[RMDB]
RNA sequence: GGGAACGACUCGAGUAGAGUCGAAAAGAUAUGGAGAUUCAAGCUUUUGACGAGGACUACAUCGGAAACGAUGUAGCCUCGAUAAGCUUGAAUGUCUCCUAAGUCAAAACAGGUGUUCGCACCUGAAUCGAUUACCAACGUUCGCGUUGGUAAUCGAAAAAGAAACAACAACAACAAC
Reactivity to DMS in 0.01 (KOAc 150mM, MgCl2 10mM, bicine 150mM(pH8.5), 24C), signal-to-noise 2, nucleotides 027 to 126: g020a010u010a300u020g010g020a000g060a130u000u010c000a000a030g000c000u000u010u010u010g000a220c160g000a000g000g080a190c000u000a010c000a020u000c000g000g010a150a130a190c010g010a020u000g010u000a020g000c010c000u000c000g010a060u010a010a010g000c000u010u000g020a000a030u000g010u000c000u000c000c000u000a060a180g000u000c040a040a040a170a180c010a000g030g010u000g000u000u030c260g000c010a030c000c020u020g010a110a040
Reactivity to 2A3 in 0.01 (KOAc 150mM, MgCl2 10mM, bicine 150mM(pH8.5), 24C), signal-to-noise 1, nucleotides 027 to 126: g000a030u120a040u170g030g000a000g030a030u000u000c000a000a030g020c050u000u180u300u300g300a250c120g060a010g000g090a210c000u020a000c020a020u020c020g030g000a110a030a030c000g000a010u020g040u010a000g000c000c010u000c000g000a010u010a000a000g010c000u030u000g000a000a010u020g030u000c010u040c000c000u000a140a010g040u040c050a050a010a120a120c020a010g000g000u030g080u120u250c300g080c160a000c020c020u000g000a010a150